[RMDB]
RNA sequence: GGGAACGACUCGAGUAGAGUCGAAAACUACAUUGUUUAUGGUGAUGUUUAUCUUCUUCCAGCGCAUAUAGUCUAAUAGCGAUUCAAACGCGUGAUAGUUUAUACCAUUCAAUAUAAUCGCUUCAUCCUUUAGAUGGUGAUCCUGAAUGCGUUUAAAGAUGUACCAGAGUUUCGACUCUGGUACAUCAAAAGAAACAACAACAACAAC
Reactivity to DMS in 0.01 (KOAc 150mM, MgCl2 10mM, bicine 150mM(pH8.5), 24C), signal-to-noise 2, nucleotides 027 to 156: c020u000a050c080a090u010u010g010u000u000u000a090u010g060g000u010g060a110u000g040u010u020u010a110u030c030u000u010c100u010u010c050c030a190g020c090g000c000a040u020a170u000a130g010u000c030u000a070a140u000a080g010c020g020a110u000u010c110a050a140a050c180g040c220g040u000g020a070u000a020g030u000u010u000a080u000a060c010c010a020u000u000c040a030a040u000a140u010a070a050u000c040g040c010u010u010c060a060u000c020c060u000u000u000a130g010a090u000g000g060u000g000a040u000c060c040u000g000a080a040u000g010c030g020u000u000u010a040a070a190
Reactivity to 2A3 in 0.01 (KOAc 150mM, MgCl2 10mM, bicine 150mM(pH8.5), 24C), signal-to-noise 3, nucleotides 027 to 156: c020u140a040c050a130u040u140g040u050u110u100a070u120g020g010u040g020a070u040g080u070u120u120a160u110c030u080u020c000u050u000c020c010a010g010c010g000c090a020u080a020u040a100g020u010c050u070a060a080u040a220g040c020g030a010u000u110c080a060a070a060c030g000c030g040u050g040a020u060a110g070u050u160u140a090u020a050c040c020a050u100u090c020a120a040u040a040u090a180a060u050c010g020c010u110u070c010a040u050c010c020u090u170u100a090g010a040u030g020g000u000g040a050u030c010c020u010g060a030a020u020g000c000g000u030u000u080a020a030a000